[RMDB]
RNA sequence: GGGAACGACUCGAGUAGAGUCGAAAACGUCAGACGACGAAGUCGGUCCAUCUGCGGUAAAAGACCGACAUAGAGUUCGAAGCAGAACGAACAACCGCAGAUACACGAUUGGAGUGUGAAUGAGAGAAUGAUAGUCAUGGUUCGCCAUGACUAUCAUAAAAGAAACAACAACAACAAC
Reactivity to 2A3 in 0.01 (KOAc 150mM, MgCl2 10mM, bicine 150mM(pH8.5), 24C), signal-to-noise 4, nucleotides 027 to 126: c020g010u000c020a070g100a300c070g000a010c000g020a100a010g020u010c010g000g030u000c010c000a010u010c010u010g000c000g000g040u060a000a040a120a000g020a000c000c010g000a000c010a010u090a010g120a000g000u000u000c010g000a080a000g080c200a030g060a130a040c010g020a010a020c020a030a000c000c000g000c000a000g000a000u050a020c050a000c010g160a120u140u260g100g010a190g040u030g010u060g070a060a210u180g020a060g020a030g080a230
Reactivity to DMS in 0.01 (KOAc 150mM, MgCl2 10mM, bicine 150mM(pH8.5), 24C), signal-to-noise 5, nucleotides 027 to 126: c040g000u010c030a080g030a170c210g000a030c040g020a130a120g010u010c010g010g010u000c030c180a060u010c000u000g000c000g000g040u010a040a080a110a100g000a030c070c010g010a010c000a060u020a090g000a080g020u000u010c000g010a120a120g000c250a160g000a090a070c020g000a000a000c040a120a060c000c010g000c000a000g000a010u020a050c150a030c060g000a120u030u020g010g020a230g000u000g000u000g000a100a080u010g010a120g010a140g010a100
Structure probing data (2A3 and DMS) for a 177-nucleotide construct. The reactions ran in a buffer of 150 mM KOAc, 10 mM MgCl2 and 150 mM bicine (pH 8.5), at 24 C. It was measured as part of the RMDB library OK1LIB.